[RMDB]
RNA sequence: GGGAACGACUCGAGUAGAGUCGAAAAUGGCGCAUUUCGGCGACCCGCAGCGCCCCGGUCGCUGGUUCGACACCGCCGACGACGCCGAGCGGCUGAUGCUGCGGCCCUCCGAUCCGCUGGACGGGGCUAGCUAAAUCAGGUUCGCCUGAUUUAGCUAAAAAGAAACAACAACAACAAC
Reactivity to DMS in 0.01 (KOAc 150mM, MgCl2 10mM, bicine 150mM(pH8.5), 24C), signal-to-noise 3, nucleotides 027 to 126: u000g000g010c020g030c080a160u000u000u000c040g020g020c120g010a100c180c010c040g000c040a030g000c030g030c120c080c090c040g000g000u000c020g020c020u000g010g010u000u000c030g000a090c120a120c130c060g020c040c030g000a100c100g010a080c150g020c020c020g010a050g010c040g010g020c040u010g010a110u010g010c020u010g000c010g010g010c040c050c020u000c020c010g000a050u000c100c030g040c040u000g010g020a100c070g000g000g000g010c180
Reactivity to 2A3 in 0.01 (KOAc 150mM, MgCl2 10mM, bicine 150mM(pH8.5), 24C), signal-to-noise 1, nucleotides 027 to 126: u100g030g010c020g010c030a080u040u080u060c050g050g000c030g070a120c000c020c000g020c010a010g020c000g030c000c080c010c040g000g040u050c020g000c000u040g050g000u040u040c020g000a020c040a040c070c080g040c030c000g010a020c030g020a010c020g000c020c030g060a030g030c010g030g000c000u070g000a070u140g020c010u020g010c000g030g000c010c040c000u060c000c010g040a140u020c020c030g060c100u180g040g030a040c040g030g000g000g000c010
This 177-nucleotide RNA was probed chemically with DMS and 2A3. Conditions: 150 mM KOAc, 10 mM MgCl2 and 150 mM bicine (pH 8.5), 24 C. For 2A3, 2,061 sequencing reads were counted. Values cover nucleotides 27 to 126.